An RNA of 177 nucleotides, treated with DMS and read out base by base. DMS adducts were read by reverse transcription with MarathonRT.

RNA sequence: GGGAACGACUCGAGUAGAGUCGAAAAGCAACACCACCAUCGGCUAGGACUAGUGCACCUGCCUCUAGGUAGUACUCGCCCGUUGUCUUGUCGCGUAUGACUGCUGCCGUUAGACCAGCUGCCGUUGAGGUACAGGGGGUUUCGACCCCCUGUACCUAAAAGAAACAACAACAACAAC
Reactivity to DMS in 0.01 (KOAc 150mM, MgCl2 10mM, bicine 150mM(pH8.5), 24C), signal-to-noise 1, nucleotides 027 to 126: g000c050a040a080c110a090c040c110a140c100c060a070u000c040g010g020c000u000a040g050g000a100c120u000a050g000u000g000c030a090c020c010u000g000c100c030u010c100u090a050g010g040u000a060g050u000a030c030u000c110g000c050c000c040g010u010u000g000u030c080u010u020g000u030c070g020c050g000u000a090u010g000a060c000u000g010c100u010g010c000c050g000u000u000a040g010a140c070c040a100g000c030u000g000c040c000g010u010u000g000
It was measured as part of the RMDB library OK2TST. The reactions ran in a buffer of 150 mM KOAc, 10 mM MgCl2 and 150 mM bicine (pH 8.5), at 24 C.